[RMDB]
RNA sequence: GGGAACGACUCGAGUAGAGUCGAAAAGGGACCGCGCAGUGGUUACAUAUGAGGGUGAUUCUAGUGCGGGAUAUAAUCAUGAUGUGUCCAUUUUGCGGGCGUGGAUUCGCACCACCAAGGUCACCGGCCCAGAUAUUGAAUUCGUUCAAUAUCUGGGAAAAGAAACAACAACAACAAC
Reactivity to 2A3 in 0.01 (KOAc 150mM, MgCl2 10mM, bicine 150mM(pH8.5), 24C), signal-to-noise 6, nucleotides 027 to 126: g010g010g010a010c000c010g000c010g000c030a010g010u020g020g040u070u090a020c010a010u090a060u090g060a060g080g160g040u200g110a040u110u040c020u060a050g130u070g270c120g020g020g000a000u030a010u020a040a060u040c030a020u080g180a030u040g110u010g020u010c020c010a020u150u180u080u130g030c030g020g030g030c110g020u040g020g020a070u090u100c070g000c050a020c000c000a010c010c010a050a040g000g000u030c040a040c220c000g030g000
Reactivity to DMS in 0.01 (KOAc 150mM, MgCl2 10mM, bicine 150mM(pH8.5), 24C), signal-to-noise 7, nucleotides 027 to 126: g010g000g000a030c010c010g020c040g020c040a030g020u000g000g000u000u000a030c030a030u000a060u000g010a060g010g010g020u010g010a050u000u000c030u000a130g020u010g020c180g010g000g000a040u000a030u000a090a130u000c050a040u000g010a040u000g010u000g010u000c000c000a040u000u010u010u000g020c020g000g000g010c150g020u000g000g010a150u000u000c140g010c130a110c010c010a020c030c050a090a120g010g010u000c010a060c010c020g010g000